Structure probing data (2A3) for a 207-nucleotide construct.
RNA sequence: GGGAACGACUCGAGUAGAGUCGAAAAUUCGGUCCUUUGGAGCGGACCGUGUGCUCCGUCAGGAUGUGGAGGUCUCGCGCCCUCCUCUGCGCGUAUGUACAUCGAUACGGUUAUGUCGCCUUUGUGUCGGCGUUUGACACUUACACAUACCGGAUAAACCAGGGUAGCACUUCGGUGCUACCCUGGUAAAAGAAACAACAACAACAAC
Reactivity to 2A3 in 0.01 (KOAc 150mM, MgCl2 10mM, bicine 150mM(pH8.5), 24C), signal-to-noise 1, nucleotides 027 to 156: u080u040c020g010g040u000c000c000u070u120u300g300g040a300g090c140g010g060a010c000c020g050u030g020u080g010c040u110c040c000g020u040c040a010g010g000a020u030g000u010g000g000a020g000g000u000c040u030c020g000c000g010c000c100c000u040c000c000u000c010u010g050c120g000c020g040u240a010u070g030u010a030c090a070u090c110g110a100u150a240c130g040g030u010u030a000u080g000u050c000g060c040c000u040u100u000g270u030g010u080c040g000g000c000g000u040u000u000g000a000c110a070c170u000u180a080c030a000c000a000u030a300c000c040g020g020a100u040a070a070
For 2A3, 429 sequencing reads were counted.